[RMDB]
RNA sequence: GGGAACGACUCGAGUAGAGUCGAAAAAGGCUUUAAUUGCCGAAGAUAACUACGCUUUAGCUGCUUAAUUGCAGUCGAACCUCUUCUCCUCUGUGCUCUCGGUGAGGAUGUAAGGGGUCAUUUAAGAGAGCUGGCUUCGACCAAUUCUCGGAGGUCCGUGUAAACGGAGCUUCGGCUCCGUUUACACAAAAGAAACAACAACAACAAC
Reactivity to 2A3 in 0.01 (KOAc 150mM, MgCl2 10mM, bicine 150mM(pH8.5), 24C), signal-to-noise 4, nucleotides 027 to 156: a000g100g000c080u150u150u130a160a070u280u170g040c000c000g010a050a000g040a050u210a160a070c100u110a070c160g020c010u050u040u130a040g000c000u010g010c010u050u130a090a130u300u090g000c030a010g020u040c070g060a090a070c010c000u000c000u000u000c000u000c000c010u000c010u060g120u090g100c020u040c030u050c090g060g060u060g000a000g020g010a030u020g040u070a000a000g020g010g000g000u000c000a000u040u090u060a070a040g060a000g010a010g000c010u020g020g010c010u040u010c050g020a070c020c030a070a220u190u070c040u010c040g000g040a040g000g050u060c080c050
Reactivity to DMS in 0.01 (KOAc 150mM, MgCl2 10mM, bicine 150mM(pH8.5), 24C), signal-to-noise 1, nucleotides 027 to 156: a210g000g010c010u020u000u000a070a050u020u000g050c010c060g010a070a090g020a120u000a080a050c070u000a020c040g000c040u000u000u000a100g020c000u000g000c010u000u010a090a110u010u000g030c000a000g020u000c070g000a070a060c020c010u000c010u000u000c000u010c000c020u020c000u000g030u000g030c100u010c080u000c060g030g030u020g020a030g030g000a050u000g020u010a030a050g020g010g030g000u010c000a040u000u000u010a130a160g000a090g000a050g020c010u000g010g000c060u000u000c060g020a040c010c040a040a160u000u010c020u020c020g040g010a030g000g010u000c110c100